Conditions: 150 mM KOAc, 10 mM MgCl2 and 150 mM bicine (pH 8.5), 24 C. An RNA of 177 nucleotides, treated with DMS and 2A3 and read out base by base. For 2A3 the reverse transcriptase was SuperScript II with manganese.

[RMDB]
RNA sequence: GGGAACGACUCGAGUAGAGUCGAAAAUUACCUUCAUAUUUUGCAAAACCUCUUAUCCAAUUGCGAGUGCAAAGUAGAGUUGGAACAUUCCAUUUAACAAUCAUAAUGGUCAUCUGGUGGGCUCUAGACGAUCUAUAUCUUUCGAGAUAUAGAUCGUAAAAGAAACAACAACAACAAC
Reactivity to DMS in 0.01 (KOAc 150mM, MgCl2 10mM, bicine 150mM(pH8.5), 24C), signal-to-noise 8, nucleotides 027 to 126: u020u030a200c020c010u010u010c050a070u000a030u010u010u010u010g010c040a080a050a130a140c160c040u000c040u000u010a100u020c120c130a070a090u010u000g010c140g000a110g030u000g010c040a030a030a040g010u010a020g000a090g010u000u000g010g000a060a100c210a070u000u000c010c010a080u020u000u020a090a080c150a080a090u020c120a060u010a050a060u010g000g000u000c060a040u010c040u000g000g020u000g010g000g000c060u000c070u000a070g000
Reactivity to 2A3 in 0.01 (KOAc 150mM, MgCl2 10mM, bicine 150mM(pH8.5), 24C), signal-to-noise 9, nucleotides 027 to 126: u080u040a120c000c000u000u020c020a030u040a060u060u060u060u060g020c020a010a020a090a220c030c010u040c020u130u160a110u130c060c050a130a150u130u140g060c060g040a040g040u050g000c010a010a020a020g010u020a010g020a020g030u030u030g030g020a030a030c010a070u030u050c020c010a030u080u100u080a120a100c090a050a060u130c050a050u100a200a050u090g030g020u030c030a050u010c060u060g090g010u030g030g090g020c010u020c030u040a060g020